[RMDB]
RNA sequence: GGGAACGACUCGAGUAGAGUCGAAAAGAUAUGGAUACGUGCUUGUUCCCAUAUCGGAAACGAUAUCGGGAUGAAGAGCACUGUAUCCUAAGUCAAAGCGCUAAAUAAGUUCGCUUAUUUAGCGCAACUCCCCCUGAAUCUUCGGAUUCAGGGGGAGAAAAGAAACAACAACAACAAC
Reactivity to 2A3 in 0.01 (KOAc 150mM, MgCl2 10mM, bicine 150mM(pH8.5), 24C), signal-to-noise 2, nucleotides 027 to 126: g000a010u010a000u040g000g020a020u000a040c020g050u000g000c030u300u120g300u300u040c000c030c000a010u000a000u000c000g020g030a020a000a000c020g000a000u000a010u120c190g050g000g020a020u190g230a300a300g010a030g000c000a010c010u020g010u000a010u000c000c000u000a000a000g000u000c020a080a100a020g010c000g000c000u000a030a000a000u020a010a010g060u060u120c160g000c220u000u000a000u000u000u000a000g000c000g000c000a000a000

Chemical mapping of a 177-nucleotide RNA with 2A3. 2A3 is a SHAPE reagent: it acylates the 2'-hydroxyl of flexible nucleotides of all four kinds. Source: RMDB library TTRDES, as collected in RNAgym.